[RMDB]
RNA sequence: GGGAACGACUCGAGUAGAGUCGAAAAUACACACGAAAGAAGCAACGCGCAGAAAGCUUGUACGCUAAGUUACGCAAGUGUUUGUCCGACCUAUUCUCGCGCGGUGAUAACGGUGGCGACGAUGGUGCCCCCGAAGAGUAUUCGUACUCUUCGGGGGAAAAGAAACAACAACAACAAC
Reactivity to 2A3 in 0.01 (KOAc 150mM, MgCl2 10mM, bicine 150mM(pH8.5), 24C), signal-to-noise 1, nucleotides 027 to 126: u040a010c050a000c010a000c010g120a110a050a130g040a060a030g000c020a060a080c000g000c000g050c010a000g020a030a000a000g030c030u000u040g060u080a010c050g000c050u130a070a030g130u120u120a050c040g020c050a050a010g010u030g010u060u080u170g050u020c000c060g000a080c030c000u030a110u060u060c000u050c060g000c010g000c040g010g030u040g030a150u150a210a010c000g110g010u060g030g000c030g050a010c000g010a000u090g160g000u110g080
Reactivity to DMS in 0.01 (KOAc 150mM, MgCl2 10mM, bicine 150mM(pH8.5), 24C), signal-to-noise 2, nucleotides 027 to 126: u010a070c080a070c050a080c050g010a090a130a040g010a110a110g000c030a060a050c090g010c070g030c040a040g020a050a060a120g000c070u000u010g010u010a060c110g030c040u000a130a170g020u030u010a060c060g000c100a050a060g020u010g010u020u000u000g010u010c120c000g020a130c030c070u000a100u000u000c050u000c080g040c010g000c050g000g000u000g000a060u000a060a130c010g010g000u000g000g010c020g060a030c040g010a070u010g010g030u010g000

Annotation: This 177-nucleotide RNA was probed chemically with 2A3 and DMS. For 2A3 the reverse transcriptase was SuperScript II with manganese. The reactions ran in a buffer of 150 mM KOAc, 10 mM MgCl2 and 150 mM bicine (pH 8.5), at 24 C. The DMS profile rests on 1,091 reads. Reactivities are given for positions 27 through 126. It was measured as part of the RMDB library OK2TRN.